The data come from the RNA Mapping Database (RMDB), library OK3TST. Chemical mapping of a 207-nucleotide RNA with 2A3. Values cover nucleotides 27 to 156. For 2A3 the reverse transcriptase was SuperScript II with manganese. The reactions ran in a buffer of 150 mM KOAc, 10 mM MgCl2 and 150 mM bicine (pH 8.5), at 24 C.

[RMDB]
RNA sequence: GGGAACGACUCGAGUAGAGUCGAAAAUCUGAAGACUGUGGGCCAGGUGAGAAGGAACAGGGCCCGCUGUGUGUGUGGUGGGCCGGGAGGGCAACCACCAGCCCUACCCGGCAGCCUUGGGGAGGAGCUCAACUCAGCCCAUGAGCCUGGAGUGCUAGCGUAUAGUACAAUUCGUUGUACUAUACGCAAAAGAAACAACAACAACAAC
Reactivity to 2A3 in 0.01 (KOAc 150mM, MgCl2 10mM, bicine 150mM(pH8.5), 24C), signal-to-noise 1, nucleotides 027 to 156: u030c000u070g050a050a030g110a050c020u000g000u010g020g000g000c010c040a050g060g020u040g060a210g040a140a040g090g040a050a090c070a140g000g020g040c000c050c050g000c000u010g010u080g000u000g020u000g070u060g000g040u060g000g140g010c010c000g000g050g010a000g000g000g000c010a010a040c100c110a010c010c040a010g040c000c000c000u150a230c050c010c000g050g000c000a000g030c000c000u080u100g060g000g000g000a030g060g000a010g010c030u040c030a060a140c070u060c100a040g010c000c000c100a080u030g030a010g020c000c110u070g010g020a050g040u130g030c040u080a000